[RMDB]
RNA sequence: GGGAACGACUCGAGUAGAGUCGAAAAGUUGGCGAUGGCUGAAUUUAUCAAGCAGGGCCAUUACAUGCAGCAUUUACGUCGGAUGCGCCGCCAAUACCAACGUAAUCGCGACAUUAUGACCGGUUGGCGACUUCAUCAUCUUCGGAUGAUGAAGUCGAAAAGAAACAACAACAACAAC
Reactivity to 2A3 in 0.01 (KOAc 150mM, MgCl2 10mM, bicine 150mM(pH8.5), 24C), signal-to-noise 2, nucleotides 027 to 126: g020u000u020g020g000c000g050a060u020g010g010c000u060g030a080a180u140u240u200a280u300c050a020a090g070c070a140g070g060g120c000c000a010u010u060a090c090a080u060g040c030a000g030c050a060u050u050u090a250c210g100u160c100g080g050a010u000g000c000g080c030c010g030c000c020a000a000u090a150c020c020a060a060c020g090u050a120a000u070c040g010c040g130a090c060a130u060u250a090u250g090a050c000c010g150g010u030u070g070g060
Reactivity to DMS in 0.01 (KOAc 150mM, MgCl2 10mM, bicine 150mM(pH8.5), 24C), signal-to-noise 2, nucleotides 027 to 126: g020u010u000g000g020c010g000a090u000g000g050c000u010g020a080a120u010u010u000a170u040c220a110a140g030c060a070g020g000g030c020c000a000u000u000a070c160a040u000g000c150a120g040c010a060u000u000u000a050c160g010u000c140g000g000a060u000g000c040g000c030c040g000c060c030a030a030u000a230c040c000a030a060c100g000u020a020a050u000c030g000c070g000a070c120a070u000u000a090u000g010a110c110c030g000g000u000u000g020g010
About this RNA: Structure probing data (2A3 and DMS) for a 177-nucleotide construct. Source: RMDB library OK2TRN, as collected in RNAgym. DMS adducts were read by reverse transcription with MarathonRT. For 2A3, 828 sequencing reads were counted. The RNA was probed in 150 mM KOAc, 10 mM MgCl2 and 150 mM bicine (pH 8.5) at 24 C.